[RMDB]
RNA sequence: GGGAACGACUCGAGUAGAGUCGAAAAUGGGAGCGAUAAAUCAUCUGGUUCAGGAACUUGGGACCCUUCAUUAUCCCAAACGUUUGAGCUUCGGUCGGUCUUACCUAGACUCGUGAGUGUGCCAAGCUCAGUGCCGGAUGUUCGCAUCCGGCACUGAAAAAGAAACAACAACAACAAC
Reactivity to 2A3 in 0.01 (KOAc 150mM, MgCl2 10mM, bicine 150mM(pH8.5), 24C), signal-to-noise 2, nucleotides 027 to 126: u150g020g000g010a010g040c040g030a060u040a200a230a150u120c010a000u000c040u080g010g010u070u040c040a000g080g060a080a080c080u040u040g000g000g000a050c000c000c000u050u080c010a170u080u260a100u060c000c000c000a040a060a000c090g020u000u040u140g010a010g000c000u030u080c120g020g060u020c040g020g020u000c030u040u020a160c000c000u020a060g020a090c000u000c100g090u110g070a020g010u020g030u050g070c000c020a000a000g020c050
Reactivity to DMS in 0.01 (KOAc 150mM, MgCl2 10mM, bicine 150mM(pH8.5), 24C), signal-to-noise 1, nucleotides 027 to 126: u010g000g000g010a000g090c070g010a090u020a110a040a110u040c040a060u010c060u000g010g000u000u010c040a050g000g000a030a100c010u020u000g000g000g000a160c100c040c110u000u030c230a020u010u000a260u000c000c000c040a020a010a020c080g000u000u010u000g000a060g060c000u000u060c190g000g010u000c030g000g000u000c000u000u000a150c120c210u050a150g000a010c030u020c020g100u010g000a040g000u000g030u040g000c020c010a030a110g000c050
This 177-nucleotide RNA was probed chemically with 2A3 and DMS.
2A3 adducts were read by reverse transcription with SuperScript II with manganese.
Values cover nucleotides 27 to 126.
For DMS the reverse transcriptase was MarathonRT.
The 2A3 profile rests on 1,160 reads.
The reactions ran in a buffer of 150 mM KOAc, 10 mM MgCl2 and 150 mM bicine (pH 8.5), at 24 C.